[RMDB]
RNA sequence: GGGAACGACUCGAGUAGAGUCGAAAAACUGGCAAAUCAAACAAUAAUUUCGCAGUAGCUGCCUAAUCGCACUCUGCAUCGCCUAACAGCAUUUCCUAUGUGCUGUUAACGCGAUUCAACCUUAAUAGGAUAUGCUAAACACUGCCGUUUGAAGUCUGAGAAGCAUUAGGUUCGCCUAAUGCUUCUCAAAAGAAACAACAACAACAAC
Reactivity to 2A3 in 0.01 (KOAc 150mM, MgCl2 10mM, bicine 150mM(pH8.5), 24C), signal-to-noise 3, nucleotides 027 to 156: a000c060u100g050g000c040a060a030a120u080c030a010a020a240c080a060a170u290a170a170u120u300u160c080g000c000a010g050u220a000g020c150u010g000c000c020u130a120a020u170c010g000c060a000c000u010c030u000g000c000a010u010c000g000c000c000u000a010a000c000a000g000c000a020u040u080u000c020c040u080a040u090g010u000g000c010u000g000u000u000a010a010c000g000c000g050a010u080u130c010a060a110c010c000u140u140a050a010u020a040g000g000a020u030a060u170g090c080u110a000a170a000c030a010c100u040g030c070c090g050u030u030u040g060a040a000g050u070c080u040